[RMDB]
RNA sequence: GGGAACGACUCGAGUAGAGUCGAAAAAGGCAAAGGCUCAAACCAAGAAGGAACAGAUCACCGUUCGUCCUGCAGAUCUUCUCGAGCCAGAGUGGGAUCACCUCGUCGAGGAGGCAUCCAAGCUGGAAACAUGAGAAGAGUUCGCUCUUCUCAUGUUAAAAGAAACAACAACAACAAC
Reactivity to DMS in 0.01 (KOAc 150mM, MgCl2 10mM, bicine 150mM(pH8.5), 24C), signal-to-noise 7, nucleotides 027 to 126: a070g020g010c060a060a110a120g020g000c020u000c050a050a080a140c090c060a110a100g020a100a060g000g010a070a050c080a080g010a070u000c080a080c080c070g010u010u000c060g010u000c020c020u000g020c090a090g000a080u000c020u000u000c010u000c050g010a050g000c040c030a040g010a100g010u010g000g000g000a090u010c090a070c020c000u000c040g000u010c190g000a090g000g000a030g000g000c280a050u000c020c030a060a110g010c020u010g000g000a300
Reactivity to 2A3 in 0.01 (KOAc 150mM, MgCl2 10mM, bicine 150mM(pH8.5), 24C), signal-to-noise 4, nucleotides 027 to 126: a010g110g020c080a090a090a020g050g000c010u040c060a060a030a090c040c030a030a030g080a030a060g100g020a050a040c020a060g040a070u090c030a020c080c030g060u070u050c030g030u030c010c000u030g000c040a030g000a100u000c000u040u000c010u040c010g040a030g020c060c020a010g010a000g020u110g030g030g060a080u100c030a060c040c000u000c020g110u020c020g020a060g080g010a020g060g000c010a010u010c010c010a020a020g030c010u030g040g000a060

An RNA of 177 nucleotides, treated with DMS and 2A3 and read out base by base. For 2A3 the reverse transcriptase was SuperScript II with manganese. DMS adducts were read by reverse transcription with MarathonRT. Values are in units of 0.01, from 0 to 300, in steps of 10. The data come from the RNA Mapping Database (RMDB), library OK2TST. Values cover nucleotides 27 to 126. Conditions: 150 mM KOAc, 10 mM MgCl2 and 150 mM bicine (pH 8.5), 24 C.